[RMDB]
RNA sequence: GGGAACGACUCGAGUAGAGUCGAAAACACGGGCUGCGUGUCAAAGGCUAGCAAAUGAAUGACGGUUCCGUUUGGAAAUAGCAACAAGGCCGUGGACGGCACGUCGCUCGAAAACACGCUUGGGGCGGGUACAGAGUACGUUCGCGUACUCUGUACCAAAAGAAACAACAACAACAAC
Reactivity to DMS in 0.01 (KOAc 150mM, MgCl2 10mM, bicine 150mM(pH8.5), 24C), signal-to-noise 3, nucleotides 027 to 126: c060a200c040g000g020g010c040u020g010c010g020u040g030u000c000a120a160a130g000g020c060u020a080g050c090a020a080a140u000g000a140a060u020g010a060c050g000g010u010u030c120c020g040u020u000u000g000g000a050a050a040u020a120g010c020a100a080c100a080a080g000g000c040c010g050u030g000g000a110c150g010g000c030a020c030g010u020c300g000c000u000c000g000a030a030a100a110c080a160c060g030c030u040u040g000g000g000g010c020g010
Reactivity to 2A3 in 0.01 (KOAc 150mM, MgCl2 10mM, bicine 150mM(pH8.5), 24C), signal-to-noise 6, nucleotides 027 to 126: c080a020c000g020g000g000c010u010g000c010g000u000g010u010c020a080a110a080g030g000c030u060a030g060c070a130a080a100u220g100a140a090u180g060a060c060g100g000u120u100c060c010g040u080u070u120g050g040a050a070a080u160a090g030c010a010a110c020a120a140g040g000c000c010g000u040g040g090a050c120g010g020c010a000c010g010u010c010g000c010u000c000g000a010a010a000a000c060a020c030g030c000u050u070g010g040g050g000c010g000